[RMDB]
RNA sequence: GGGAACGACUCGAGUAGAGUCGAAAACCCGGAACCAGGAAAUGGGAAAGAGACGGUAGAAAAGAGCGAGCCUCCCAGUUUUCGAGUAGUCCCGGACCUAUCUAAAUUGGAGUCAUCCGACCGUAUGCACCGUGUCGCUUCGGCGACACGAAAAGAAACAACAACAACAAC
Reactivity to 2A3 in 0.01 (KOAc 150mM, MgCl2 10mM, bicine 150mM(pH8.5), 24C), signal-to-noise 4, nucleotides 027 to 129: c020c000c000g020g050a020a030c020c010a010g000g070a000a030a090u060g010g030g060a020a020a020g080a010g010a020c020g000g040u070a020g090a040a140a050a000g050a010g020c070g010a010g000c000c000u020c000c010c010a040g010u060u070u030u020c040g000a040g000u020a010g010u040c010c000c000g020g010a060c030c000u040a070u170c040u080a050a060a110u140u160g010g000a000g000u010c010a060u060c040c010g030a070c010c000g080u110a050u160g030c010a010c000
Reactivity to DMS in 0.01 (KOAc 150mM, MgCl2 10mM, bicine 150mM(pH8.5), 24C), signal-to-noise 4, nucleotides 027 to 129: c000c010c030g000g000a050a060c110c040a060g030g020a010a030a040u050g060g030g020a010a060a100g010a080g020a040c110g020g030u010a060g040a080a080a170a050g050a080g050c060g040a120g010c070c030u000c000c000c000a090g040u020u030u010u050c020g010a050g000u000a070g000u020c070c000c120g030g040a070c040c080u050a090u040c070u030a020a030a100u000u000g030g010a060g010u000c080a050u020c040c040g010a090c060c070g030u050a020u070g030c000a140c000